[RMDB]
RNA sequence: GGGAACGACUCGAGUAGAGUCGAAAAUACGCUUCGGAUUACCUUUCUCAGCGACAGGUUGCAGAAAUGCGAGCGCCUUGCCUUUGGCGAUGACGGCCAUAUGCGCUGCUUUCGUUCGCCAGGUAUAUCACAAAACACCAUUCGUGGUGUUUUGUGAAAAAGAAACAACAACAACAAC
Reactivity to 2A3 in 0.01 (KOAc 150mM, MgCl2 10mM, bicine 150mM(pH8.5), 24C), signal-to-noise 2, nucleotides 027 to 126: u100a010c010g010c030u030u090c010g060g090a090u060u130a070c020c000u020u020u020c050u000c020a100g050c040g140a140c030a050g090g080u100u070g040c080a040g060a100a110a020u170g080c040g040a000g000c040g020c010c020u010u050g020c000c000u220u120u170g000g000c000g020a010u010g020a000c020g000g000c020c040a100u170a100u300g090c140g020c070u030g010c030u020u110u060c040g050u010u030c000g000c000c000a000g000g020u010a060u000a010
Reactivity to DMS in 0.01 (KOAc 150mM, MgCl2 10mM, bicine 150mM(pH8.5), 24C), signal-to-noise 2, nucleotides 027 to 126: u010a260c070g010c010u010u000c030g010g010a120u000u000a070c090c030u010u000u010c030u000c120a080g010c090g000a060c140a030g000g010u000u000g010c140a060g000a030a030a040u010g020c010g010a050g000c030g030c030c070u000u000g000c020c000u000u010u010g030g020c000g000a010u000g000a030c020g010g020c020c020a270u000a110u010g000c130g000c020u000g010c120u000u000u010c010g010u000u000c010g030c020c010a030g020g020u000a040u010a100
This 177-nucleotide RNA was probed chemically with 2A3 and DMS.
The reactions ran in a buffer of 150 mM KOAc, 10 mM MgCl2 and 150 mM bicine (pH 8.5), at 24 C.
The DMS profile rests on 2,236 reads.